[RMDB]
RNA sequence: GGGAACGACUCGAGUAGAGUCGAAAAACAGGGAAGCAAGGGGAGAUGAGAGAAAUGCAGCAGCUCUCAGGAGGACAGAAAUCUCUGGUAGCCCUUGCUCUCAUCUUUGCCAUUCAGAAAUGCGACAAAUGGUAUUACCUUUCGAGGUAAUACCAUUAAAAGAAACAACAACAACAAC
Reactivity to DMS in 0.01 (KOAc 150mM, MgCl2 10mM, bicine 150mM(pH8.5), 24C), signal-to-noise 7, nucleotides 027 to 126: a130c160a100g020g010g000a060a070g010c020a030a020g000g010g010g010a150g020a120u000g000a020g010a020g010a030a040a070u010g010c070a040g000c080a200g000c000u000c010u000c010a060g010g010a080g020g020a090c100a100g010a060a080a160u010c050u000c010u000g010g020u010a190g000c010c010c010u000u000g000c000u010c030u000c010a040u000c050u000u000u000g020c020c020a100u010u020c140a100g010a070a090a050u000g010c080g000a100c130a060
Reactivity to 2A3 in 0.01 (KOAc 150mM, MgCl2 10mM, bicine 150mM(pH8.5), 24C), signal-to-noise 3, nucleotides 027 to 126: a000c040a030g060g000g020a090a000g020c010a000a010g010g000g020g000a140g000a060u070g000a010g000a000g020a040a060a040u180g020c020a050g020c010a010g030c020u000c000u000c010a010g010g110a010g030g040a030c040a080g130a110a220a150u090c030u000c000u020g120g050u090a100g030c010c000c000u000u030g000c000u010c000u000c000a060u020c000u060u040u070g080c010c020a030u050u030c000a010g050a130a150a040u090g020c040g060a020c050a010
Conditions: 150 mM KOAc, 10 mM MgCl2 and 150 mM bicine (pH 8.5), 24 C. An RNA of 177 nucleotides, treated with DMS and 2A3 and read out base by base. For DMS, 9,089 sequencing reads were counted. DMS adducts were read by reverse transcription with MarathonRT. Values cover nucleotides 27 to 126. It was measured as part of the RMDB library OK2TST. In probing experiments dimethyl sulfate is read out at A N1 and C N3, which are open when not base-paired. The 2A3 profile rests on 4,584 reads.